[RMDB]
RNA sequence: GGGAACGACUCGAGUAGAGUCGAAAAAGCGUCUUCAGAGACAUUGCAACGAUGAAGCGACUGUGUCAUUCAUCGGCAGUUGGUCCAGGAGACUGGACCAUGAGAGUCUGAGGAAGACACAGUCGUUUCUCAGAAUCUCUCAGUCUCUGAAGACGCACGUUGCUUGUUAGUUCGCUAACAAGCAACGAAAAGAAACAACAACAACAAC
Reactivity to 2A3 in 0.01 (KOAc 150mM, MgCl2 10mM, bicine 150mM(pH8.5), 24C), signal-to-noise 2, nucleotides 027 to 156: a000g020c000g010u010c000u000u000c000a000g010a000g000a010c010a030u020u110g010c090a170a080c070g020a040u210g010a000a000g020c010g000a000c010u010g010u010g040u010c070a300u010u000c020a040u010c010g000g000c010a090g100u030u010g010g000u000c000c000a000g010g010a040g020a040c000u000g000g000a000c030c000a010u020g060a040g020a010g040u020c060u300g010a000g000g040a000a000g000a020c000a000c000a010g000u000c000g000u000u000u000c000u000c000a000g000a030a060u010c020u010c000u020c090a050g000u000c000u000c000u000g000a000a000g000a000c000g000c000a000
This 207-nucleotide RNA was probed chemically with 2A3. 2A3 adducts were read by reverse transcription with SuperScript II with manganese. The 2A3 profile rests on 2,823 reads. The reactions ran in a buffer of 150 mM KOAc, 10 mM MgCl2 and 150 mM bicine (pH 8.5), at 24 C. Reactivities are given for positions 27 through 156.